[RMDB]
RNA sequence: GGGAACGACUCGAGUAGAGUCGAAAAACUGAGCAUGCUAUGUUGGAAAGAUAGCAUGCUGGAGUAAUAAUGAAUUGCGGAACGCCUUAGGCUGGAAACAGAGCAGGGUUAGCAAUCGCUUGUAUACGGUGCAAAGUUUGCGAUGAGCGAUUAGUAUCGGCAGUGAAAAGUUCGCUUUUCACUGCCGAAAAGAAACAACAACAACAAC
Reactivity to 2A3 in 0.01 (KOAc 150mM, MgCl2 10mM, bicine 150mM(pH8.5), 24C), signal-to-noise 1, nucleotides 027 to 156: a010c010u030g020a000g000c020a000u000g000c000u000a030u050g080u110u050g120g040a050a010a000g050a010u000a000g000c000a010u000g000c000u000g000g010a010g050u130a070a190u010a050a040u100g140a090a080u070u040g010c000g030g070a090a000c030g010c010c030u130u140a120g050g020c000u080g000g070a000a220a060c010a000g030a030g020c010a020g020g010g000u040u070a000g040c040a000a040u010c000g000c010u000u010g060u000a060u050a140c040g100g010u060g020c030a050a050a080g100u030u010u120g000c020g050a100u050g030a010g000c000g010a010u100u090a010g040u010a080u010